[RMDB]
RNA sequence: GGGAACGACUCGAGUAGAGUCGAAAAAUGAUUCAAAAGAUUCAUGGUAAAGGGUCACUUGUCAUUUAUCAGGAGGUUACAGAGUUUCCAUUUUCUGAACUUGUUAGUUUUAAAGAAAUGCAAGAAGGUUGCAGGAUGUAUUCGUACAUCCUGCAACAAAAGAAACAACAACAACAAC
Reactivity to 2A3 in 0.01 (KOAc 150mM, MgCl2 10mM, bicine 150mM(pH8.5), 24C), signal-to-noise 2, nucleotides 027 to 126: a000u030g040a020u070u000c000a000a000a000a230g010a060u000u000c060a080u100g230g000u250a080a110a170g040g000g130u060c060a090c190u040u100g000u050c000a040u000u000u110a110u000c000a000g090g080a000g100g000u070u050a110c000a000g000a070g030u000u000u100c000c000a000u150u000u000u020c000u000g140a130a130c000u000u040g020u190u000a060g000u090u000u000u130a080a200a000g150a100a050a000u150g000c060a020a020g000a020a040g020
Reactivity to DMS in 0.01 (KOAc 150mM, MgCl2 10mM, bicine 150mM(pH8.5), 24C), signal-to-noise 1, nucleotides 027 to 126: a090u000g010a070u040u000c060a140a050a150a090g050a060u000u040c010a020u000g000g000u000a020a140a050g010g000g010u020c090a040c070u040u000g000u020c040a060u000u010u020a020u010c110a040g000g000a020g010g000u010u000a030c110a070g000a120g000u000u000u010c010c010a050u000u000u000u000c060u000g000a040a060c050u000u060g060u020u030a080g040u000u030u000u020a000a180a130g010a010a010a020u010g000c040a000a070g010a190a070g030

Chemical mapping of a 177-nucleotide RNA with 2A3 and DMS. For DMS the reverse transcriptase was MarathonRT. The data come from the RNA Mapping Database (RMDB), library OK1LIB. For DMS, 1,860 sequencing reads were counted. Reactivities are given for positions 27 through 126.